[RMDB]
RNA sequence: GGGAACGACUCGAGUAGAGUCGAAAAAAAGAUAUGGAGCAGUGGAGCUCUAGAGAGGUCGAGGAUCAGCGAUCGGAAACGAUCGCUGGGAGACUGGUUAGAGCUAUGAAGCUGCUCCUAAGUCAAACUCUUUUACAACGUUCGCGUUGUAAAAGAGAAAAGAAACAACAACAACAAC
Reactivity to DMS in 0.01 (KOAc 150mM, MgCl2 10mM, bicine 150mM(pH8.5), 24C), signal-to-noise 1, nucleotides 027 to 126: a110a090a070g010a040u000a300u000g000g010a010g000c010a030g020u000g000g000a010g000c000u000c000u000a040g000a120g020a180g000g010u010c010g040a080g010g000a060u020c010a020g000c000g030a000u010c000g020g000a140a070a190c000g010a000u000c000g030c000u010g010g010g000a020g040a010c000u000g030g010u040u000a000g000a030g000c000u000a130u020g000a110a260g000c030u010g010c000u000c000c000u000a020a050g000u000c030a100a130a190